Chemical mapping of a 177-nucleotide RNA with DMS and 2A3. The RNA was probed in 150 mM KOAc, 10 mM MgCl2 and 150 mM bicine (pH 8.5) at 24 C. Reactivities are given for positions 27 through 126.
[RMDB]
RNA sequence: GGGAACGACUCGAGUAGAGUCGAAAACGGCGGCACGCCGGUGGUCAGGUAGUUGAGGGUCUGGUUGGCCAGGCAGGCGACCUGCACGUCGAGCAGGGCCAUGUCGAUGUGCUGGCCGAUGCCGCUACCCAGUGCAGUGAUUCGUCACUGCACUGGGAAAAGAAACAACAACAACAAC
Reactivity to DMS in 0.01 (KOAc 150mM, MgCl2 10mM, bicine 150mM(pH8.5), 24C), signal-to-noise 2, nucleotides 027 to 126: c100g020g000c010g020g000c030a090c170g020c030c020g000g020u000g000g000u000c010a030g010g010u000a050g000u000u030g000a150g030g010g010u020c030u000g000g000u000u010g010g000c050c010a030g010g030c010a180g000g000c030g020a020c010c000u010g020c050a050c050g000u000c070g000a080g000c030a140g040g000g010c010c030a050u010g020u000c000g010a140u020g020u000g000c000u010g000g020c000c020g020a110u000g000c000c000g000c030u000a100
Reactivity to 2A3 in 0.01 (KOAc 150mM, MgCl2 10mM, bicine 150mM(pH8.5), 24C), signal-to-noise 2, nucleotides 027 to 126: c010g010g000c030g000g000c030a010c060g000c030c020g000g000u020g020g030u070c040a030g030g090u040a050g020u030u120g110a120g060g120g000u020c010u080g190g040u140u180g090g040c040c040a030g000g080c020a010g020g010c010g050a070c000c000u020g000c040a040c030g100u060c050g030a040g070c030a080g050g000g090c020c060a060u100g040u030c040g100a130u160g070u150g060c000u000g000g000c010c010g000a040u050g000c000c000g020c010u030a030